About this RNA:
The record gives the reactivity of an RNA of 177 nucleotides to DMS and 2A3. Reactivities are given for positions 27 through 126. 2A3 adducts were read by reverse transcription with SuperScript II with manganese. DMS adducts were read by reverse transcription with MarathonRT. Conditions: 150 mM KOAc, 10 mM MgCl2 and 150 mM bicine (pH 8.5), 24 C.

RNA sequence: GGGAACGACUCGAGUAGAGUCGAAAAGGCCCAGGUCGGAAACGGAGCAGGUCAAAACUCCCGUGCUGAUCAGUAGUGGGAUCGCGCCUGUGAAUAGCCACUGCACUCCAGCCUGAGCAACAUAGCGACUCACUAUUGUUUUCGAACAAUAGUGAGUAAAAGAAACAACAACAACAAC
Reactivity to DMS in 0.01 (KOAc 150mM, MgCl2 10mM, bicine 150mM(pH8.5), 24C), signal-to-noise 9, nucleotides 027 to 126: g010g000c000c010c010a070g000g010u000c030g010g010a040a130a090c080g000g010a170g010c070a050g010g000u020c150a080a080a140a120c120u000c020c010c020g010u010g010c030u010g010a060u040c090a040g030u000a050g010u010g000g000g000a030u010c070g010c140g010c040c040u010g000u000g010a080a080u020a090g000c030c030a080c040u000g010c050a150c090u010c020c020a090g010c030c010u000g000a050g000c050a080a070c120a060u020a090g010c150g010
Reactivity to 2A3 in 0.01 (KOAc 150mM, MgCl2 10mM, bicine 150mM(pH8.5), 24C), signal-to-noise 9, nucleotides 027 to 126: g080g000c000c000c000a010g020g020u040c030g010g020a060a100a090c040g020g010a050g020c050a010g010g030u110c000a020a050a060a120c040u020c010c010c010g010u020g000c020u070g020a210u110c090a020g030u060a020g050u060g020g010g010a030u030c030g010c010g020c060c030u050g010u020g050a060a090u100a060g010c010c010a050c030u050g000c020a020c040u010c010c010a010g010c000c010u040g020a020g020c010a010a100c030a100u170a040g070c050g060